[RMDB]
RNA sequence: GGGAACGACUCGAGUAGAGUCGAAAACAACAAAACAAAACAUAGGGGAGUCAGGGUUCGGAACACCUACCCGAACCUAGGGUAACACUGACUGUGGAGGGGAAAAGAAAGAAAACAAAACAAAACAAUAGUAGGACGGAUUCGUCCGUCCUACUAUAAAAGAAACAACAACAACAAC
Reactivity to 2A3 in 0.01 (KOAc 150mM, MgCl2 10mM, bicine 150mM(pH8.5), 24C), signal-to-noise 1, nucleotides 027 to 126: c080a010a010c000a020a120a000a030c110a120a020a000a000c060a050u260a110g000g000g000g000a040g020u020c000a040g000g000g030u000u000c000g000g000a060a020c050a130c120c010u080a030c020c000c000g000a010a000c000c000u000a040g030g000g070u030a040a000c010a000c170u010g180a010c000u040g030u060g000g060a210g000g000g000g010a010a010a010a010g120a000a040a000g200a060a040a000a000c140a000a210a010a000c080a020a020a000a000c060a040
Reactivity to DMS in 0.01 (KOAc 150mM, MgCl2 10mM, bicine 150mM(pH8.5), 24C), signal-to-noise 1, nucleotides 027 to 126: c300a010a140c170a170a040a080a020c100a160a020a170a000c150a050u030a010g000g070g020g110a060g000u000c060a070g000g000g040u000u000c000g010g000a040a170c280a150c110c010u020a030c030c000c060g000a000a000c000c000u000a070g000g000g000u000a010a150c300a170c240u020g050a050c000u000g000u000g000g000a290g000g000g000g000a050a000a030a190g000a210a010a170g000a080a050a080a050c080a050a020a020a080c180a000a000a110a070c300a020